[RMDB]
Background:
Structure probing data (DMS and 2A3) for a 177-nucleotide construct. For 2A3 the reverse transcriptase was SuperScript II with manganese. DMS adducts were read by reverse transcription with MarathonRT. Conditions: 150 mM KOAc, 10 mM MgCl2 and 150 mM bicine (pH 8.5), 24 C. Source: RMDB libraries RFM100 and RFMREP, as collected in RNAgym.
RNA sequence: GGGAACGACUCGAGUAGAGUCGAAAACAUGUCUUUGUUACCGCCUUUACCAAUGCCAGCGAUUUUGCCAUCUUUAAUACCAAUAUCCGCUUUAUAAAUACCGGUGUAAUCCACGAUUAAAGCGUUACUUUAUAUACUAUUUCGAUAGUAUAUAAAGAAAAGAAACAACAACAACAAC
Reactivity to DMS in 0.01 (KOAc 150mM, MgCl2 10mM, bicine 150mM(pH8.5), 24C), signal-to-noise 8, nucleotides 027 to 126: c080a100u020g010u010c050u000u000u010g020u010u000a110c040c030g010c050c020u010u000u010a060c050c040a060a070u020g010c020c020a060g010c050g000a080u000u000u010u010g010c030c020a040u010c030u010u010u010a060a060u010a120c060c030a060a090u030a080u010c160c020g010c020u000u000u010a040u020a060a070a090u030a080c150c060g000g000u000g000u020a070a070u010c090c020a050c080g000a110u000u000a010a030a040g010c030g000u010u010a090
Reactivity to 2A3 in 0.01 (KOAc 150mM, MgCl2 10mM, bicine 150mM(pH8.5), 24C), signal-to-noise 9, nucleotides 027 to 126: c040a050u110g050u020c060u030u110u090g060u070u070a070c010c010g040c010c010u050u080u070a050c020c020a050a040u080g030c010c010a020g030c050g050a070u050u030u050u120g030c010c010a030u010c040u030u110u070a090a060u080a100c020c030a050a040u050a050u150c040c010g010c020u040u070u030a100u060a050a190a050u150a080c060c050g070g000u040g030u050a050a070u060c040c010a040c050g050a040u040u090a040a020a010g010c000g020u010u010a020